Structure probing data (DMS and 2A3) for a 170-nucleotide construct.
Source: RMDB library 15KLIB, as collected in RNAgym.
Conditions: 150 mM KOAc, 10 mM MgCl2 and 150 mM bicine (pH 8.5), 24 C.
RNA sequence: GGGAACGACUCGAGUAGAGUCGAAAAAUUUUCAACUGGUGUGAACUUUGUUGUUCAGCCAGUUGGUGUUGUAGACACUGAGUGGGGUAACAUGUUAACGGGCAUUGCUGCACGUCCUCCACCAGGUAAGGAACCAGAUUCGUCUGGUUCAAAAGAAACAACAACAACAAC
Reactivity to DMS in 0.01 (KOAc 150mM, MgCl2 10mM, bicine 150mM(pH8.5), 24C), signal-to-noise 7, nucleotides 027 to 129: a070u040u030u020u030c020a000a000c010u010g000g000u000g030u050g000a020a010c030u010u020u100g050u030u010g000u000u040c010a270g000c010c000a010g020u010u010g030g000u000g000u000u000g000u010a070g000a130c160a080c030u050g000a080g040u040g000g030g050g020u050a050a130c250a110u080g000u010u070a110a030c040g020g030g040c010a040u040u120g020c160u000g030c050a000c050g030u010c150c020u020c000c000a000c010c040a050g010g010u030a030a060g010
Reactivity to 2A3 in 0.01 (KOAc 150mM, MgCl2 10mM, bicine 150mM(pH8.5), 24C), signal-to-noise 8, nucleotides 027 to 129: a000u070u070u040u070c000a000a000c000u020g000g010u150g050u030g120a010a000c010u070u110u210g250u300u140g010u250u020c000a000g000c000c000a000g000u000u000g000g000u040g000u010u010g000u000a030g010a020c040a030c100u020g020a030g110u010g000g020g010g010u070a140a020c040a150u180g040u140u140a050a030c020g000g020g000c040a050u040u300g080c100u080g000c030a030c030g010u030c020c000u000c000c000a010c000c000a000g010g030u020a050a060g100